[RMDB]
The record gives the reactivity of an RNA of 177 nucleotides to DMS and 2A3. The data come from the RNA Mapping Database (RMDB), library TTRDES.

RNA sequence: GGGAACGACUCGAGUAGAGUCGAAAAGAUAUGGAAUCAGGAUGAUGACCAACAGCGUGUAUCGGAAACGAUACACGACAUGGUCGCAUCUGAUUCCUAAGUCAAACGGACUGGUUCGCCAGUCCGAGUGUAAGAGUAAGUUCGCUUACUCUUACACAAAAGAAACAACAACAACAAC
Reactivity to DMS in 0.01 (KOAc 150mM, MgCl2 10mM, bicine 150mM(pH8.5), 24C), signal-to-noise 9, nucleotides 027 to 126: g010a040u010a300u010g000g010a010a000u000c000a020g010g020a030u000g010a080u010g020a010c000c010a050a130c300a200g000c020g010u000g000u000a000u000c010g000g010a120a110a230c010g010a010u000a000c000a010c000g000a020c090a180u000g010g010u000c000g010c000a010u000c000u000g000a010u000u000c000c000u000a020a080g000u000c030a090a090a290c020g000g000a020c000u000g000g000u000u010c240g020c000c000a010g000u000c000c000g000a020
Reactivity to 2A3 in 0.01 (KOAc 150mM, MgCl2 10mM, bicine 150mM(pH8.5), 24C), signal-to-noise 9, nucleotides 027 to 126: g020a020u070a040u160g000g010a010a010u010c020a050g300g070a170u030g070a120u170g010a010c010c010a060a170c100a160g100c010g000u000g000u000a000u000c000g020g020a080a050a040c010g000a000u000a000c000a000c000g000a010c000a070u080g000g000u010c000g000c000a000u000c000u000g000a000u000u000c000c000u000a090a010g060u030c050a110a040a070c020g000g000a000c000u010g000g100u080u090c300g050c120c000a000g000u000c000c000g000a030
Notes:
The 2A3 profile rests on 121,713 reads. The RNA was probed in 150 mM KOAc, 10 mM MgCl2 and 150 mM bicine (pH 8.5) at 24 C.